[RMDB]
RNA sequence: GGGAACGACUCGAGUAGAGUCGAAAAGAUAUGGACCUUACGAGGAACUACCUUGGACGGUCGGAAACGACCGUAGAGAGGCCGAUGAGUAAGGUCCUAAGUCAAAACAUCGCGUUCGCGCGAUGAACUGAUACUCCUUCUUCGGAAGGAGUAUCAGAAAAGAAACAACAACAACAAC
Reactivity to 2A3 in 0.01 (KOAc 150mM, MgCl2 10mM, bicine 150mM(pH8.5), 24C), signal-to-noise 3, nucleotides 027 to 126: g010a010u060a050u100g000g000a020c000c000u000u000a010c020g030a070g100g030a110a120c130u220a210c280c000u020u030g150g080a010c000g000g000u020c030g020g000a020a030a010c010g010a010c010c010g030u050a050g040a000g000a000g110g000c090c110g180a260u150g020a020g010u010a020a020g000g010u020c000c010u000a000a000g010u000c010a020a000a030a110c010a000u000c010g000c000g060u080u060c280g010c000g000c000g120a010u010g010a050a040
Reactivity to DMS in 0.01 (KOAc 150mM, MgCl2 10mM, bicine 150mM(pH8.5), 24C), signal-to-noise 3, nucleotides 027 to 126: g000a030u000a300u000g010g000a020c000c000u000u010a020c030g010a160g010g000a090a090c100u010a300c030c000u010u000g000g010a020c010g000g000u010c000g000g000a050a090a170c000g020a000c000c000g000u000a080g000a180g030a040g000g010c110c090g000a130u020g010a290g010u000a010a000g000g000u010c010c010u010a020a080g020u000c020a070a040a070a170c000a000u000c000g020c000g000u000u030c160g040c000g020c010g010a010u000g000a040a180